[RMDB]
RNA sequence: GGGAACGACUCGAGUAGAGUCGAAAAGAGGAAAUGGUGUCUCGGAGCGCGCGGAGUAAACAUAUAUGGUUCAUAUAUAACCGUAGGCACGUAAAGAAAGCGAGUAAGGCAGAGAGAACUGCCAGAAAGUACCACCUACGUUCGCGUAGGUGGUACUAAAAGAAACAACAACAACAAC
Reactivity to 2A3 in 0.01 (KOAc 150mM, MgCl2 10mM, bicine 150mM(pH8.5), 24C), signal-to-noise 2, nucleotides 027 to 126: g060a060g000g160a080a110a120u270g060g010u070g000u000c000u030c040g070g020a060g030c060g000c000g010c010g000g000a100g090u160a010a100a000c020a000u040a000u000a030u010g130g060u210u240c020a000u030a000u050a000u040a050a010c000c000g000u000a020g000g000c030a000c050g020u090a040a050a060g100a060a060a080g100c030g020a030g070u110a160a030g010g000c000a000g000a000g000a000g000a030a030c000u000g000c000c010a000g000a000a060
Reactivity to DMS in 0.01 (KOAc 150mM, MgCl2 10mM, bicine 150mM(pH8.5), 24C), signal-to-noise 1, nucleotides 027 to 126: g000a060g070g010a080a010a090u010g030g030u000g060u000c000u000c140g010g000a050g060c000g000c110g030c020g000g000a060g000u000a030a060a010c100a040u000a020u000a050u000g000g000u000u080c090a050u080a030u000a040u000a170a150c000c000g050u000a060g000g000c030a000c160g050u000a050a070a050g060a010a050a060g000c030g000a110g050u070a030a100g000g050c000a020g000a100g000a200g000a110a070c000u000g000c000c000a010g000a080a050